[RMDB]
RNA sequence: GGGAACGACUCGAGUAGAGUCGAAAACUGUGAUUUUUCGGCCGAGAUCCACAAGGACACACCAUUCGGGGCUACGUUUUAUCGCAUGGCAGUCCUUCCGUGUACACUUAAGAUAGAUUUUGGUGUUCUAUCUCAGGGCAAUAAGAUAGCAGAAUUAUAGCUAUUUAAUGUUCGCAUUAAAUAGCUAAAAAGAAACAACAACAACAAC
Reactivity to DMS in 0.01 (KOAc 150mM, MgCl2 10mM, bicine 150mM(pH8.5), 24C), signal-to-noise 3, nucleotides 027 to 156: c060u000g000u000g000a150u000u000u000u010u010c050g030g000c010c000g020a120g000a100u000c020c040a070c040a060a080g000g000a080c030a070c040a150c000c010a110u000u010c050g000g040g020g000c030u000a040c030g010u000u010u000u010a070u000c050g040c040a060u010g020g050c080a140g020u000c030c020u000u010c050c070g020u010g000u010a080c080a070c030u000u000a060a040g010a080u000a030g010a050u000u010u000u010g000g020u000g010u010u000c020u000a060u010c020u000c000a050g010g000g010c070a080a080u010a060a090g010a090u000a050g000c030a090g000a090a110u010u010a230
Reactivity to 2A3 in 0.01 (KOAc 150mM, MgCl2 10mM, bicine 150mM(pH8.5), 24C), signal-to-noise 6, nucleotides 027 to 156: c020u040g040u030g100a120u030u030u000u040u120c040g020g000c020c010g030a020g020a070u090c060c020a040c030a060a040g020g000a000c020a000c010a010c060c010a030u070u080c040g020g020g080g000c070u140a100c040g050u080u070u140u170a110u110c020g010c040a020u020g020g000c040a020g010u010c000c000u050u050c080c050g030u030g000u040a020c070a020c060u060u100a070a020g030a090u110a060g050a090u080u060u070u120g070g000u050g020u050u020c030u020a040u020c000u000c040a070g070g030g000c020a020a040u100a130a020g040a050u070a020g010c030a000g060a080a010u210u130a090
Chemical mapping of a 207-nucleotide RNA with DMS and 2A3.